[RMDB]
RNA sequence: GGGAACGACUCGAGUAGAGUCGAAAAACAGAUUCAUAGCACCUAAACCUGAAGCUGGAAGGACAAAGAUGGAUUGGUACCUAACUCUCAGUGGUAUUAUAGAAUGUAAAUCACAAUCAGGAGCUGGACCUCAUUACCCUUUCGAGGGUAAUGAGGUAAAAGAAACAACAACAACAAC
Reactivity to DMS in 0.01 (KOAc 150mM, MgCl2 10mM, bicine 150mM(pH8.5), 24C), signal-to-noise 2, nucleotides 027 to 126: a110c080a070g010a090u010u010c050a070u000a070g010c040a080c050c050u000a050a110a080c090c070u000g010a120a080g030c050u000g020g010a100a060g010g000a090c110a030a050a060g020a120u000g000g000a090u010u000g000g040u000a020c030c000u000a050a090c070u010c040u010c060a140g050u010g010g050u000a020u010u010a060u000a100g000a090a070u010g010u010a020a020a070u000c020a050c030a050a050u010c120a040g000g000a070g010c080u000g000g020
Reactivity to 2A3 in 0.01 (KOAc 150mM, MgCl2 10mM, bicine 150mM(pH8.5), 24C), signal-to-noise 2, nucleotides 027 to 126: a010c010a030g050a050u110u050c000a020u080a090g030c040a040c010c040u060a070a090a040c010c020u040g090a100a000g060c090u070g050g020a090a050g050g050a030c030a020a200a050g060a060u070g020g000a050u070u050g020g040u100a080c000c010u020a050a010c010u010c000u020c070a020g020u020g050g020u040a070u160u030a060u040a030g220a110a070u190g030u140a010a040a080u100c020a020c010a040a040u070c030a060g080g000a020g000c020u020g040g030